Conditions: 150 mM KOAc, 10 mM MgCl2 and 150 mM bicine (pH 8.5), 24 C. This 207-nucleotide RNA was probed chemically with 2A3. Values cover nucleotides 27 to 156. Reactivities are rounded to 0.1 and cut off at 0 and 3.
RNA sequence: GGGAACGACUCGAGUAGAGUCGAAAAUCAUCUUUCUCAGCCGUUAGCAAAAAGUUCCAAUUGCUGACGUUAAUUGACGAGGUAUUAAUUCAAACUACUGACUUCCGAGGUGAUCCCUGACGCAGUCGGAUCAUGGUCACAGCCAAAAGAGAACCCCCUGGGGGUGUAUGUUCGCAUACACCCCCAGAAAAGAAACAACAACAACAAC
Reactivity to 2A3 in 0.01 (KOAc 150mM, MgCl2 10mM, bicine 150mM(pH8.5), 24C), signal-to-noise 1, nucleotides 027 to 156: u060c030a030u040c030u020u100u050c020u020c030a100g000c030c010g000u000u040a000g000c010a040a090a090a110a080g050u150u110c090c020a120a090u020u000g060c000u000g000a000c000g020u000u060a070a080u060u080g040a020c020g000a020g030g070u060a040u100u200a150a070u190u110c050a050a070a040c000u200a050c020u030g040a030c020u100u160c160c020g140a020g000g030u000g080a040u020c030c010c000u050g000a040c050g000c180a050g000u050c030g010g020a020u080c010a010u150g100g000u070c100a040c000a030g010c010c050a020a100a030a010g070a000g000a070a010c040c150c210c010